[RMDB]
RNA sequence: GGGAACGACUCGAGUAGAGUCGAAAAACGGAGACAGGACGGAGCAGGGAACACCAUCCGGCGCCGCACCUUCUGCACAGCAGGGGGACUCCAUUCUAGCAGCAGGGUCAGCGGAAUCUGUGACCGACGCUAUGAGACUUUUCGAAGUCUCAUAGCGAAAAGAAACAACAACAACAAC
Reactivity to 2A3 in 0.01 (KOAc 150mM, MgCl2 10mM, bicine 150mM(pH8.5), 24C), signal-to-noise 2, nucleotides 027 to 126: a010c050g000g000a000g020a040c020a050g090g090a030c000g040g000a020g060c100a160g060g010g060a150a060c070a010c150c000a040u000c020c000g040g020c070g000c010c000g000c000a080c000c000u040u040c000u000g000c150a140c090a300g040c010a010g070g000g000g090g020a020c010u000c050c000a030u120u040c020u050a090g080c040a000g020c020a040g000g090g110u110c020a020g090c030g070g110a120a090u110c020u070g030u020g070a060c010c010g000a000
Reactivity to DMS in 0.01 (KOAc 150mM, MgCl2 10mM, bicine 150mM(pH8.5), 24C), signal-to-noise 2, nucleotides 027 to 126: a090c150g020g000a080g010a150c110a020g020g010a140c030g000g000a070g040c040a110g020g030g000a080a090c110a110c120c100a130u000c030c000g000g000c040g000c020c040g040c050a200c010c010u000u000c020u000g000c000a090c110a030g010c110a040g020g000g000g000g000a140c050u000c020c060a130u000u000c050u010a130g000c040a020g010c130a050g000g000g000u000c090a070g020c090g000g020a060a050u010c030u040g010u010g000a090c040c020g020a150